[RMDB]
This 207-nucleotide RNA was probed chemically with 2A3 and DMS. The RNA was probed in 150 mM KOAc, 10 mM MgCl2 and 150 mM bicine (pH 8.5) at 24 C. The 2A3 profile rests on 2,615 reads. For 2A3 the reverse transcriptase was SuperScript II with manganese. DMS adducts were read by reverse transcription with MarathonRT. For DMS, 1,960 sequencing reads were counted.
RNA sequence: GGGAACGACUCGAGUAGAGUCGAAAAUCCUAAGUCCUGAGGGAGCGAUUGAUUGAGCGAAGAACUACUCGGAAACGAGUAGGGAGCUCAUAGAUCGCGAGGAUCUCAGGAUAUGGAAAAAGUUUCAUCUCGCCUGUUCGCAGGCGAGAUGAAACAACUAGUUAGCGUAGUUCGCUACGCUAACUAGAAAAGAAACAACAACAACAAC
Reactivity to 2A3 in 0.01 (KOAc 150mM, MgCl2 10mM, bicine 150mM(pH8.5), 24C), signal-to-noise 1, nucleotides 027 to 156: u030c000c000u010a080a010g030u000c000c000u000g000a010g020g020g010a000g000c030g000a000u000u040g070a140u070u010g010a020g000c010g090a300a030g010a040a040c000u000a000c000u000c000g030g000a100a070a030c020g000a000g000u000a000g000g000g000a000g000c000u000c000a000u010a010g010a000u010c000g000c010g000a010g000g010a010u000c000u000c000a000g000g000a010u020a030u040g010g000a010a060a070a100a000g000u020u000u000c000a010u000c000u020c010g000c000c020u040g050u140u090c300g000c140a000g000g000c000g000a000g000a000u000g020a000a000a000c000a000a000
Reactivity to DMS in 0.01 (KOAc 150mM, MgCl2 10mM, bicine 150mM(pH8.5), 24C), signal-to-noise 1, nucleotides 027 to 156: u000c010c000u000a080a300g040u000c010c010u010g020a040g010g000g000a100g010c000g070a040u010u000g010a300u020u000g000a070g020c010g010a090a200g010a110a200c010u010a000c000u010c000g000g040a230a150a230c010g020a030g020u000a020g010g000g010a300g000c000u000c000a000u000a170g000a000u000c020g010c000g000a090g000g010a060u000c040u010c010a010g000g010a000u000a010u000g000g030a070a060a100a110a120g000u000u000u000c010a010u000c020u050c000g000c000c000u000g030u000u030c300g030c010a000g000g040c040g040a010g000a010u000g000a000a000a000c030a020a150